Structure probing data (2A3 and DMS) for a 207-nucleotide construct. DMS adducts were read by reverse transcription with MarathonRT. The data come from the RNA Mapping Database (RMDB), library ARCHII.
[RMDB]
RNA sequence: GGGAACGACUCGAGUAGAGUCGAAAAUGCAUGCCGAGUUGGUAACAGAACUCGUAAAUCCACUGUUGCAACUUUCUAUAGUUGCCAAUGACGAAAACUACGGUGCUCAACUAGCUGCGUAAGCAGCCUAGCCGCACUUCUGGUAGCUUCGGCUCCACUAAUUCCUCCUCUUCGGAGGAGGAAUUAGAAAAGAAACAACAACAACAAC
Reactivity to 2A3 in 0.01 (KOAc 150mM, MgCl2 10mM, bicine 150mM(pH8.5), 24C), signal-to-noise 4, nucleotides 027 to 156: u100g030c040a020u120g040c020c000g000a010g010u070u010g080g060u010a030a000c000a020g010a030a000c010u000c060g060u140a030a030a010u040c050c030a040c060u010g030u050u050g000c010a020a020c010u070u210u180c150u300a110u140a120g000u000u010g010c040c020a110a160u140g010a030c040g070a030a040a080a050c060u130a060c060g040g000u000g000c000u030c110a020a070c010u010a000g000c000u010g010c010g050u080a060a150g020c020a000g020c050c010u000a000g010c020c010g000c020a000c000u100u050c040u040g060g030u130a030g010c010u040u050c100g060g010c010u010c020c010a040
Reactivity to DMS in 0.01 (KOAc 150mM, MgCl2 10mM, bicine 150mM(pH8.5), 24C), signal-to-noise 1, nucleotides 027 to 156: u000g000c060a150u000g020c100c000g000a120g030u000u030g030g010u000a090a150c080a130g000a040a060c010u000c070g000u000a090a060a170u000c030c030a110c050u000g030u010u000g010c020a060a050c030u000u000u010c120u000a060u000a070g000u010u000g030c020c020a110a120u010g000a120c030g000a090a020a060a060c070u000a030c100g000g000u000g000c020u000c050a070a020c010u000a000g000c000u000g020c000g000u000a160a170g020c010a000g000c200c000u000a000g010c010c300g000c000a020c010u000u000c110u020g060g020u010a020g010c070u010u000c060g030g000c010u020c020c030a170
The RNA was probed in 150 mM KOAc, 10 mM MgCl2 and 150 mM bicine (pH 8.5) at 24 C.